[RMDB]
RNA sequence: GGGAACGACUCGAGUAGAGUCGAAAAACUCGACGGCUACGGCCGUCGAGAAUGAUGUUAUGAUGAUGGGCAACAUGUUCAACUGCUCUGAAUGGGCUGAAUGAAAAUAGCCUUUCUGAACAUCAAACGAAUUGGAUGGGUUCGCCCAUCCAAUUCGAAAAGAAACAACAACAACAAC
Reactivity to 2A3 in 0.01 (KOAc 150mM, MgCl2 10mM, bicine 150mM(pH8.5), 24C), signal-to-noise 2, nucleotides 027 to 126: a000c000u000c000g010a010c000g010g010c000u060a010c200g090g000c010c000g000u000c000g060a000g000a000a000u010g020a000u020g000u070u010a090u160g080a050u050g030a020u070g000g000g020c050a190a010c030a170u240g050u020u030c000a060a050c030u010g000c000u000c100u060g210a150a160u300g000g000g000c050u060g050a220a170u020g000a010a070a020a020u040a050g000c000c000u000u000u030c010u030g030a000a000c000a000u020c000a000a000a040
Reactivity to DMS in 0.01 (KOAc 150mM, MgCl2 10mM, bicine 150mM(pH8.5), 24C), signal-to-noise 1, nucleotides 027 to 126: a090c010u000c010g040a000c000g070g050c000u000a080c300g010g000c030c000g010u000c000g030a000g030a090a050u080g000a000u080g000u010u020a300u000g000a030u000g000a000u000g000g000g000c010a000a090c300a130u090g000u000u000c000a000a170c040u000g020c000u020c050u000g000a070a040u010g000g000g000c040u010g010a040a090u000g000a040a040a020a060u000a300g000c000c000u010u010u000c000u000g030a000a040c000a000u000c040a040a080a160